[RMDB]
An RNA of 177 nucleotides, treated with 2A3 and DMS and read out base by base. The data come from the RNA Mapping Database (RMDB), library OK2TST.
RNA sequence: GGGAACGACUCGAGUAGAGUCGAAAAAGUCCGCCGCCGCCAACCCCACGGCCCCUACUACCUAGGCGGGUGGUCCGCGGGCGGCGUCGUCGCCUACGAAGUCUGCCUGCAACUGAUCGCCGAAGGCCAGAUAAAUAGCGUUCGCGCUAUUUAUCUGAAAAGAAACAACAACAACAAC
Reactivity to 2A3 in 0.01 (KOAc 150mM, MgCl2 10mM, bicine 150mM(pH8.5), 24C), signal-to-noise 2, nucleotides 027 to 126: a000g060u020c030c020g020c040c020g020c010c000g000c040c040a070a030c050c000c000c010a020c020g030g030c000c010c020c020u060a070c010u020a050c020c020u020a020g040g030c030g030g010g010u040g000g010u050c060c090g000c020g030g020g000c000g000g010c000g010u000c000g000u000c050g060c000c040u060a040c010g000a020a010g020u000c040u100g070c020c010u010g000c010a020a010c020u040g020a040u090c010g000c020c010g070a060a030g040g020c020
Reactivity to DMS in 0.01 (KOAc 150mM, MgCl2 10mM, bicine 150mM(pH8.5), 24C), signal-to-noise 5, nucleotides 027 to 126: a140g000u000c030c010g020c070c050g010c030c020g010c040c040a080a180c080c030c020c060a150c090g020g010c020c010c000c020u000a070c100u010a110c070c060u000a200g020g010c010g000g000g010u030g000g010u000c070c120g030c020g000g000g020c010g010g010c000g010u000c020g000u000c200g010c140c060u020a120c010g000a040a070g010u000c010u020g050c020c000u000g010c030a150a060c050u000g010a080u000c000g010c010c010g010a090a070g000g010c130